An RNA of 207 nucleotides, treated with DMS and 2A3 and read out base by base. For 2A3, 1,716 sequencing reads were counted. 2A3 adducts were read by reverse transcription with SuperScript II with manganese. The RNA was probed in 150 mM KOAc, 10 mM MgCl2 and 150 mM bicine (pH 8.5) at 24 C. The DMS profile rests on 2,187 reads. The data come from the RNA Mapping Database (RMDB), library M2RFPK. Reactivities are rounded to 0.1 and cut off at 0 and 3.

RNA sequence: GGGAACGACUCGAGUAGAGUCGAAAAGGCAAUAACGAACUAAUUCUAAGCAAGUAAUGGAGGAAUGCCAGGGUCACUAUCUAGCCAUAAUAGUGCUUGACAGUAUGAUACUAACUGAACAAUAAGUAAAAGCGCUGGUACUUCGGUACCAGCGCAAUCAUUUAGUCCUCUUCGGAGGACUAAAUGAAAAAGAAACAACAACAACAAC
Reactivity to DMS in 0.01 (KOAc 150mM, MgCl2 10mM, bicine 150mM(pH8.5), 24C), signal-to-noise 1, nucleotides 027 to 156: g010g010c070a080a040u010a090a150c090g000a070a170c050u000a080a160u000u000c020u030a130a150g050c040a060a010g010u010a060a040u000g010g030a100g040g000a020a040u000g030c020c020a040g040g010g000u010c040a000c000u010a070u010c030u010a070g010c050c010a080u000a050a120u000a060g010u000g000c040u000u000g040a020c020a040g000u030a090u020g010a120u010a090c060u000a070a150c030u000g040a040a090c040a030a080u000a030a090g030u010a010a070a090a250g000c010g100c000u000g000g020u000a020c020u000u020c190g060g030u010a020c030c020a020g000c030g000c000a000a010
Reactivity to 2A3 in 0.01 (KOAc 150mM, MgCl2 10mM, bicine 150mM(pH8.5), 24C), signal-to-noise 3, nucleotides 027 to 156: g020g000c040a070a140u110a220a070c060g050a000a040c080u100a110a070u080u000c020u100a090a030g020c030a050a010g040u070a090a120u060g010g010a050g020g030a090a050u080g020c040c020a020g010g000g020u030c000a000c020u020a020u050c020u040a050g010c010c000a020u020a090a070u050a050g030u040g000c020u000u000g040a010c010a010g010u030a040u040g050a010u000a040c010u010a080a010c010u020g030a030a010c050a030a070u030a070a000g030u060a050a050a070a060g010c000g020c030u000g000g010u010a000c010u010u070c170g040g000u000a000c000c020a000g010c000g000c000a000a000